[RMDB]
RNA sequence: GGGAACGACUCGAGUAGAGUCGAAAAGCAUGCGGAGGGCGUUGGCUGGCCUCCUAAAAAGCCGACAAAACAAUAAAUGCCGAACCUAAGGCUAAAUGCGAAAUUAUCAGUUUCUCUGAACUCUCUGAGCAAAGAUUAGCUGCUUAAUUAGCAAAAGCUCAAUCGUUAACUUCGGUUAACGAUUGAGAAAAGAAACAACAACAACAAC
Reactivity to 2A3 in 0.01 (KOAc 150mM, MgCl2 10mM, bicine 150mM(pH8.5), 24C), signal-to-noise 2, nucleotides 027 to 156: g030c060a070u200g060c060g010g010a010g010g010g020c040g050u080u060g020g000c040u050g030g060c010c020u020c000c020u050a030a050a040a000a010g030c040c010g050a050c050a030a090a050a010c040a030a100u140a160a070a050u180g000c030c010g020a080a040c010c050u090a070a030g000g000c010u070a090a040a070u050g000c000g020a020a020a010u010u020a000u010c000a000g000u000u050u000c030u000c000u010g080a110a030c010u030c000u000c170u300g010a000g000c010a080a060a000g000a000u020u030a020g000c000u010g000c010u000u010a030a000u000u010a030g000c000a010a040a080a010g030